Conditions: 150 mM KOAc, 10 mM MgCl2 and 150 mM bicine (pH 8.5), 24 C. This 207-nucleotide RNA was probed chemically with DMS and 2A3. Reactivities are rounded to 0.1 and cut off at 0 and 3. The DMS profile rests on 1,805 reads.
RNA sequence: GGGAACGACUCGAGUAGAGUCGAAAAGGAAUUUCAAAUAAGGAAAAGUAUCAAAAGUAAUAUUUUAGCUAUUCUCAGUGAUAUUAGGUGAUUCAGGAAAUGCUGAAAUACAGAGGUUGAGUUAAUUUGCAUUUCAUAGGGUGGUUUGGUGGAUGCGCACAUCGAGUCAAUUCGUUGACUCGAUGUGAAAAGAAACAACAACAACAAC
Reactivity to DMS in 0.01 (KOAc 150mM, MgCl2 10mM, bicine 150mM(pH8.5), 24C), signal-to-noise 1, nucleotides 027 to 156: g010g040a140a050u000u000u010c040a150a150a070u010a070a060g000g000a070a070a160a030g010u000a050u010c020a060a110a090a080g000u000a160a120u000a030u000u010u020u000a130g020c030u010a200u010u000c050u020c020a100g030u010g030a050u000a070u000u000a070g040g000u000g000a120u000u000c040a080g020g000a050a020a090u000g010c050u000g020a070a050a070u000a090c060a100g000a060g000g000u000u010g030a090g010u010u010a030a080u000u000u000g000c070a030u010u000u000c000a090u010a070g050g050g050u000g000g010u000u010u010g030g000u000g020g000a050u010g000c020g000
Reactivity to 2A3 in 0.01 (KOAc 150mM, MgCl2 10mM, bicine 150mM(pH8.5), 24C), signal-to-noise 1, nucleotides 027 to 156: g040g000a070a070u070u110u220c110a080a080a040u180a040a080g010g010a030a030a020a020g020u040a070u140c060a060a030a040a130g030u070a050a150u020a120u120u070u080u130a020g000c000u000a050u180u030c030u000c070a020g060u020g060a020u000a110u220u160a030g050g030u050g050a050u070u020c020a000g000g070a000a050a000u070g000c000u010g020a000a050a010u060a020c050a020g070a050g040g040u070u040g020a020g030u020u040a030a050u010u040u080g010c020a010u010u010u010c020a020u140a010g040g000g020u050g010g000u050u070u050g080g020u030g020g010a010u040g020c030g000
Description:
2A3 adducts were read by reverse transcription with SuperScript II with manganese.